[RMDB]
RNA sequence: GGGAACGACUCGAGUAGAGUCGAAAAGCUUUACCUAUACAGAGAAUAGCACACGGGUUUCAGGCAAUUGAACACUUACCGACUAUUCAUGAAAUCCAAGAGAAGAAUAUCACGCUUGUCAUGGCCCCCACGUUACAGUAUUCGUACUGUAACGUGGAAAAGAAACAACAACAACAAC
Reactivity to DMS in 0.01 (KOAc 150mM, MgCl2 10mM, bicine 150mM(pH8.5), 24C), signal-to-noise 3, nucleotides 027 to 126: g020c140u000u000u010a170c050c000u000a080u020a150c110a090g000a160g010a080a020u000a020g020c050a120c100a150c170g000g000g010u020u000u000c030a050g020g000c130a050a090u010u010g010a010a060c130a060c080u000u010a150c090c030g000a090c050u000a030u000u000c030a080u000g010a030a060a090u000c050c010a030a110g000a080g000a070a070g000a070a050u000a050u010c120a090c160g010c030u000u000g000u000c010a090u000g020g020c000c020c030
Reactivity to 2A3 in 0.01 (KOAc 150mM, MgCl2 10mM, bicine 150mM(pH8.5), 24C), signal-to-noise 3, nucleotides 027 to 126: g000c000u090u120u170a130c020c000u090a070u060a140c050a010g170a010g020a190a080u060a090g030c060a020c000a010c120g050g010g000u000u060u070c040a040g080g000c040a090a120u160u050g060a080a000c030a020c090u080u090a050c020c010g060a040c020u040a030u070u000c020a010u050g020a020a070a000u000c030c040a040a010g030a000g020a110a020g040a050a020u090a040u160c020a040c130g030c010u030u030g010u090c030a060u040g070g000c010c000c010